[RMDB]
RNA sequence: GGGAACGACUCGAGUAGAGUCGAAAAGAUAUGGAUCCUUCUCUAGCGUGAGCGAAGAACUACUAUGGAUAAGUAUUCGGAAACGAAUACGAAACCAUAGUAGGGAGCUUCGGGAGGAUCCUAAGUCCUAAGAAAUGCAGUUCGCUGCAUUUCUUAGAAAAGAAACAACAACAACAAC
Reactivity to DMS in 0.01 (KOAc 150mM, MgCl2 10mM, bicine 150mM(pH8.5), 24C), signal-to-noise 2, nucleotides 027 to 126: g020a150u010a300u010g000g000a000u000c000c000u000u000c000u000c240u000a040g020c090g030u010g020a100g030c110g000a090a120g000a300a210c000u000a010c000u010a010u000g000g000a060u000a040a300g000u000a000u010u000c000g000g000a100a110a230c020g000a020a000u000a000c000g000a090a260a300c000c000a010u010a000g000u000a000g000g010g000a040g000c000u000u000c110g010g010g010a010g000g000a030u000c010c000u000a010a080g000u000c060
Reactivity to 2A3 in 0.01 (KOAc 150mM, MgCl2 10mM, bicine 150mM(pH8.5), 24C), signal-to-noise 1, nucleotides 027 to 126: g010a040u150a070u240g020g050a000u040c020c050u040u070c110u030c140u150a070g170c010g300u300g170a000g090c110g280a300a020g040a110a020c020u000a010c030u000a000u000g000g000a020u010a120a070g050u010a010u010u020c010g000g000a030a090a030c020g010a010a010u010a000c000g000a060a010a020c000c000a010u000a010g000u000a000g000g000g000a030g010c000u050u050c020g010g000g010a000g040g000a010u010c000c000u000a000a040g000u000c000
An RNA of 177 nucleotides, treated with DMS and 2A3 and read out base by base.
Reactivities are given for positions 27 through 126.
The 2A3 profile rests on 1,837 reads.
The RNA was probed in 150 mM KOAc, 10 mM MgCl2 and 150 mM bicine (pH 8.5) at 24 C.
In probing experiments dimethyl sulfate is read out at A N1 and C N3, which are open when not base-paired.
2A3 adducts were read by reverse transcription with SuperScript II with manganese.
Source: RMDB library TTRINS, as collected in RNAgym.
High 2A3 reactivity points to a flexible backbone, as in loops and unpaired stretches.